[RMDB]
Chemical mapping of a 177-nucleotide RNA with 2A3. The data come from the RNA Mapping Database (RMDB), library OK1LIB. 2A3 adducts were read by reverse transcription with SuperScript II with manganese.

RNA sequence: GGGAACGACUCGAGUAGAGUCGAAAACAAGCAGUCGGUUGAAUGUAGAUGCACGUAUGUCCUAGCGUUAACUCAUUCAGUCAUUUACGAGGGAACGGGACGUUCGUAAAUAGUGUACUUCACAUACGUCACCGGUGACUUUCGAGUCACCGGUGACAAAAGAAACAACAACAACAAC
Reactivity to 2A3 in 0.01 (KOAc 150mM, MgCl2 10mM, bicine 150mM(pH8.5), 24C), signal-to-noise 2, nucleotides 027 to 126: c000a030a070g200c040a000g060u050c060g130g070u020u050g040a110a020u120g040u200a000g000a120u220g010c040a000c000g030u040a000u270g010u090c040c000u030a020g140c060g000u000u110a040a110c040u030c000a030u190u130c050a040g140u060c030a120u000u030u140a090c050g010a080g050g040g010a070a060c100g010g020g010a000c070g020u050u030c010g000u040a020a020a020u150a010g000u010g000u110a030c020u060u080c050a010c010a150u160a040c050